An RNA of 177 nucleotides, treated with DMS and 2A3 and read out base by base. For DMS the reverse transcriptase was MarathonRT. As a SHAPE reagent, 2A3 marks flexible, mostly unpaired nucleotides at the ribose 2'-OH. The reactions ran in a buffer of 150 mM KOAc, 10 mM MgCl2 and 150 mM bicine (pH 8.5), at 24 C.
RNA sequence: GGGAACGACUCGAGUAGAGUCGAAAAUUGAUAGUGUUGAUGUAGCAAGUCAAGUACAGCAUAAUGAAUGCUCAAAAACUAUUGAGAAAAUUUUGUCAGAUUUAGAAGUUAAUCUAGGUGAUGUGGCUGUUUCUCUACAUUUCGAUGUAGAGAAACAAAAAGAAACAACAACAACAAC
Reactivity to DMS in 0.01 (KOAc 150mM, MgCl2 10mM, bicine 150mM(pH8.5), 24C), signal-to-noise 3, nucleotides 027 to 126: u000u010g010a040u000a020g030u000g030u010u000g020a090u000g010u010a110g010c100a060a100g010u010c040a050a050g020u000a130c200a090g030c020a070u000a110a070u000g020a090a100u000g010c000u000c030a040a090a080a120a070c050u000a040u000u000g010a060g010a050a080a090a080u000u000u000u000g010u000c050a060g010a050u000u010u000a060g010a060a090g000u020u010a070a050u000c040u000a030g020g010u000g000a070u000g020u000g000g020c120
Reactivity to 2A3 in 0.01 (KOAc 150mM, MgCl2 10mM, bicine 150mM(pH8.5), 24C), signal-to-noise 2, nucleotides 027 to 126: u050u050g010a010u020a030g050u130g050u170u060g060a050u090g030u020a030g040c030a020a100g030u010c010a010a000g040u040a100c060a020g020c010a010u040a090a120u250g080a130a010u050g070c010u010c050a020a080a050a010a060c040u050a070u140u070g000a010g090a030a190a000a020u070u220u110u090g030u050c030a000g000a110u040u090u060a060g010a220a000g060u130u120a030a060u020c020u050a060g050g030u050g000a060u080g010u020g080g000c040